[RMDB]
RNA sequence: GGGAACGACUCGAGUAGAGUCGAAAAGGACACGGGAAACGUGAAAAAGCAAGGAAGUGGGACGCCUCCAAAGGAACCCAGUAAUUCUCCAGCAACAGAUCCCCAUCCAAAAGAAAUUCAAGAAAUGCCAGAUAUUGAAGUUCGCUUCAAUAUCUGGAAAAGAAACAACAACAACAAC
Reactivity to DMS in 0.01 (KOAc 150mM, MgCl2 10mM, bicine 150mM(pH8.5), 24C), signal-to-noise 1, nucleotides 027 to 126: g000g000a110c030a040c140g060g000g160a040a030a070c030g010u030g000a000a030a050a080a300g010c040a010a010g010g030a100a160g000u000g000g000g000a180c300g050c040c000u000c170c080a150a260a100g000g000a100a110c010c000c040a000g000u000a190a080u020u040c040u000c000c090a040g000c120a040a130c060a010g010a190u010c000c000c000c080a220u000c040c020a070a050a040a240g000a040a040a010u000u000c110a140a020g000a070a110a010u090g010
Reactivity to 2A3 in 0.01 (KOAc 150mM, MgCl2 10mM, bicine 150mM(pH8.5), 24C), signal-to-noise 3, nucleotides 027 to 126: g010g030a030c040a030c090g010g000g040a190a180a040c010g010u020g040a130a050a060a060a040g060c090a040a020g010g060a030a040g080u040g020g010g020a040c060g060c020c020u080c140c070a210a030a050g050g000a080a140c000c010c010a020g010u120a080a110u060u070c050u030c020c020a020g000c020a020a050c020a010g010a050u000c000c000c000c010a010u030c020c000a010a030a060a020g100a050a110a010u220u210c080a070a030g060a090a090a000u100g030